Conditions: 150 mM KOAc, 10 mM MgCl2 and 150 mM bicine (pH 8.5), 24 C.
This 207-nucleotide RNA was probed chemically with 2A3 and DMS.
In probing experiments dimethyl sulfate is read out at A N1 and C N3, which are open when not base-paired.
Values are in units of 0.01, from 0 to 300, in steps of 10.
[RMDB]
RNA sequence: GGGAACGACUCGAGUAGAGUCGAAAAAAGAGUGGAAACUAGAAAUCGGAAUCCAAGAGUCAAAAGUAACAAACAGCAAGUGGUUGUAGAUGGUUCCGUUUACGAGUGUCAGCAGGGAAACUAGGGAGUGUCCUGCUCAGGAUGGUGCAUCUCCCAACCAUCCUAGGGGAUUCGUCCCCUAGGAUGGAAAAGAAACAACAACAACAAC
Reactivity to 2A3 in 0.01 (KOAc 150mM, MgCl2 10mM, bicine 150mM(pH8.5), 24C), signal-to-noise 1, nucleotides 027 to 156: a000a000g000a010g020u000g060g000a000a000a050c050u040a090g060a060a060a030u130c030g040g030a000a020u090c040c050a070a000g090a030g120u070c050a050a120a020a000g040u150a110a100c040a050a080a010c010a020g130c060a090a060g150u030g110g000u060u050g030u040a050g000a110u030g000g020u050u030c010c000g020u000u040u070a040c050g010a020g010u000g070u070c060a020g030c000a000g000g000g030a100a070a100c060u100a110g070g010g030a020g010u030g010u000c000c010u030g020c010u020c010a030g020g110a050u040g000g020u070g000c000a050u020c020u000c020c000c020a000a030
Reactivity to DMS in 0.01 (KOAc 150mM, MgCl2 10mM, bicine 150mM(pH8.5), 24C), signal-to-noise 1, nucleotides 027 to 156: a050a070g010a040g030u010g000g000a100a090a180c060u000a080g040a070a070a180u000c040g020g040a090a110u000c040c040a060a140g020a140g020u010c050a000a080a050a110g000u020a090a060c030a050a060a030c040a050g010c090a070a130g000u010g030g000u000u020g010u000a110g030a100u000g040g020u020u010c010c020g040u020u000u010a060c020g010a090g030u010g070u010c050a040g050c010a050g000g060g010a060a010a030c050u020a160g000g010g010a100g000u000g030u010c060c020u000g010c020u000c060a090g040g010a060u010g000g000u010g000c060a110u000c060u000c000c000c000a090a150